[RMDB]
RNA sequence: GGGAACGACUCGAGUAGAGUCGAAAAGAUAUGGAUUAGAAGGUGACAUGAUGGACUCGGAAACGAGUUGACCAUCAACAGCACCCUAAUCCUAAGUCAAAGGAAGCACCACUUCGGUGGUGCUUCCGAUAGUCCAUGGCUUCGGCCAUGGACUAUCAAAAGAAACAACAACAACAAC
Reactivity to DMS in 0.01 (KOAc 150mM, MgCl2 10mM, bicine 150mM(pH8.5), 24C), signal-to-noise 2, nucleotides 027 to 126: g010a020u010a230u000g000g000a010u010u000a020g030a150a180g030g000u000g020a060c080a220u030g030a040u000g000g000a130c000u000c000g040g000a060a070a190c000g030a000g000u000u010g030a210c220c000a010u000c020a100a080c210a190g000c000a020c000c020c000u000a000a010u000c000c000u010a000a060g000u000c030a130a080a180g020g010a000a010g050c000a000c000c000a000c030u000u000c270g000g030u020g000g000u000g020c000u000u010c000c010
Reactivity to 2A3 in 0.01 (KOAc 150mM, MgCl2 10mM, bicine 150mM(pH8.5), 24C), signal-to-noise 2, nucleotides 027 to 126: g090a010u040a020u070g010g040a030u000u010a040g160a300a270g110g020u030g020a150c150a300u060g000a020u010g030g000a020c000u010c040g010g040a030a040a010c010g030a010g000u000u120g020a020c050c000a060u050c050a060a080c100a050g000c000a020c000c000c040u010a000a020u020c010c000u010a090a000g010u070c060a070a050a180g000g010a000a000g030c000a000c000c000a000c030u090u180c300g040g000u000g000g000u020g010c040u000u010c000c010
An RNA of 177 nucleotides, treated with DMS and 2A3 and read out base by base. The DMS profile rests on 1,305 reads. The reactions ran in a buffer of 150 mM KOAc, 10 mM MgCl2 and 150 mM bicine (pH 8.5), at 24 C. For 2A3, 1,641 sequencing reads were counted. It was measured as part of the RMDB library TTRDES.